[RMDB]
RNA sequence: GGGAACGACUCGAGUAGAGUCGAAAAGUAUAGGAAGUCAGCGGAAAUCCGGGCAAGUCCGCGACGCGUUGGAACAUCGACCGCACGAAGACCACCAACACGACCGGAAACACGAUGGGAAAGAUGAGUUUUAAUACUCGUUCGCGAGUAUUAAAACAAAAGAAACAACAACAACAAC
Reactivity to 2A3 in 0.01 (KOAc 150mM, MgCl2 10mM, bicine 150mM(pH8.5), 24C), signal-to-noise 5, nucleotides 027 to 126: g080u070a060u180a210g040g090a090a050g030u060c050a020g010c000g000g030a050a030a070u050c030c010g000g010g020c080a070a030g050u020c000c010g020c010g000a020c000g000c010g010u020u040g050g040a080a040c020a040u060c050g050a050c060c030g030c060a030c040g040a030a010g030a030c000c020a040c030c010a040a000c030a010c070g040a040c010c020g050g000a030a040a000c080a000c020g060a070u110g020g020g060a100a100a030g090a080u120g040a020
Reactivity to DMS in 0.01 (KOAc 150mM, MgCl2 10mM, bicine 150mM(pH8.5), 24C), signal-to-noise 4, nucleotides 027 to 126: g010u020a080u010a120g000g000a060a080g000u000c030a070g030c050g050g000a050a120a080u010c010c000g000g010g000c060a080a080g000u000c030c020g020c020g020a070c060g010c090g000u000u000g010g010a070a110c160a120u010c050g000a100c030c040g000c070a090c030g000a060a130g030a100c070c080a090c020c030a040a070c050a050c070g010a070c070c020g010g000a040a040a100c170a070c070g000a030u010g000g010g000a020a060a060g030a060u000g000a150
About this RNA: Structure probing data (2A3 and DMS) for a 177-nucleotide construct. For DMS, 6,408 sequencing reads were counted. The reactions ran in a buffer of 150 mM KOAc, 10 mM MgCl2 and 150 mM bicine (pH 8.5), at 24 C. DMS adducts were read by reverse transcription with MarathonRT. 2A3 is a SHAPE reagent: it acylates the 2'-hydroxyl of flexible nucleotides of all four kinds.